RNA sequence: GGGAACGACUCGAGUAGAGUCGAAAAGAUAUGGAUGGAAUAGGGAGCGACGUGGGUCGGAAACGACCCACUAUCGCGACGAUCUAUCCAUCCUAAGUCAAAAGUCGCAGUCUUCGGACUGCGACAAGCCUAUAUAUAUGUUCGCAUAUAUAUAGGCAAAAGAAACAACAACAACAAC
Reactivity to 2A3 in 0.01 (KOAc 150mM, MgCl2 10mM, bicine 150mM(pH8.5), 24C), signal-to-noise 1, nucleotides 027 to 126: g000a000u020a010u050g000g000a000u010g020g030a260a060u010a040g040g000g000a020g000c000g020a010c040g010u000g020g020g000u000c010g000g000a020a000a000c010g000a000c000c030c010a000c010u010a020u050c010g000c020g050a100c000g000a010u000c000u000a000u050c000c000a010u000c000c000u000a000a000g000u010c020a040a150a130a090g010u000c050g000c010a000g000u000c040u060u300c300g160g010a010c000u000g000c060g000a000c000a000a020
Reactivity to DMS in 0.01 (KOAc 150mM, MgCl2 10mM, bicine 150mM(pH8.5), 24C), signal-to-noise 1, nucleotides 027 to 126: g000a020u000a000u000g000g000a040u010g000g010a100a060u000a010g000g000g010a030g030c000g090a010c300g010u000g000g000g020u010c010g020g010a020a010a030c000g020a010c000c000c000a000c000u000a050u000c000g040c010g000a070c270g000a010u040c000u010a000u000c000c000a030u000c000c000u010a010a040g000u000c000a050a090a120a080g000u010c010g040c000a040g000u000c020u010u030c250g020g000a050c000u000g000c000g030a000c010a040a290
Record summary:
Source: RMDB library TTRDES, as collected in RNAgym. This 177-nucleotide RNA was probed chemically with 2A3 and DMS. The reactions ran in a buffer of 150 mM KOAc, 10 mM MgCl2 and 150 mM bicine (pH 8.5), at 24 C. DMS adducts were read by reverse transcription with MarathonRT.